This 177-nucleotide RNA was probed chemically with DMS and 2A3. Source: RMDB library OK2TST, as collected in RNAgym. Values cover nucleotides 27 to 126.

RNA sequence: GGGAACGACUCGAGUAGAGUCGAAAAUCCGCUUUUUAAUGAUGGAGAAACCGAAGCGUGAUAAACUUAAACAUGUCUAUGCCUGGUAUGUUUCCUCACUACUUAGAAGAUAUACAAUAUUACCCAACUAUAAAUUAGCCUUCGGGCUAAUUUAUAGAAAAGAAACAACAACAACAAC
Reactivity to DMS in 0.01 (KOAc 150mM, MgCl2 10mM, bicine 150mM(pH8.5), 24C), signal-to-noise 2, nucleotides 027 to 126: u000c010c090g000c040u000u000u000u000u000a050a090u000g000a100u000g030g000a100g000a060a100a080c050c040g010a050a070g000c050g020u000g010a060u010a010a110a070c100u000u010a050a110a070c190a100u010g000u010c030u010a060u000g000c030c000u000g000g030u000a020u020g000u000u000u000c030c010u000c040a050c040u010a000c010u000u000a050g010a050a060g000a050u000a040u000a090c060a050a060u010a120u000u010a140c010c010c000a130a260
Reactivity to 2A3 in 0.01 (KOAc 150mM, MgCl2 10mM, bicine 150mM(pH8.5), 24C), signal-to-noise 1, nucleotides 027 to 126: u030c030c010g000c050u080u090u040u040u090a090a100u040g100a030u050g020g010a050g040a070a030a010c020c020g010a050a000g000c010g070u050g000a050u050a040a200a000c030u050u070a000a010a120c000a020u150g040u050c090u120a020u040g000c000c030u000g000g000u030a060u090g040u020u010u000c000c000u000c060a060c020u080a030c020u030u020a030g010a060a040g000a080u040a020u060a130c030a040a130u250a070u260u120a060c020c000c000a030a030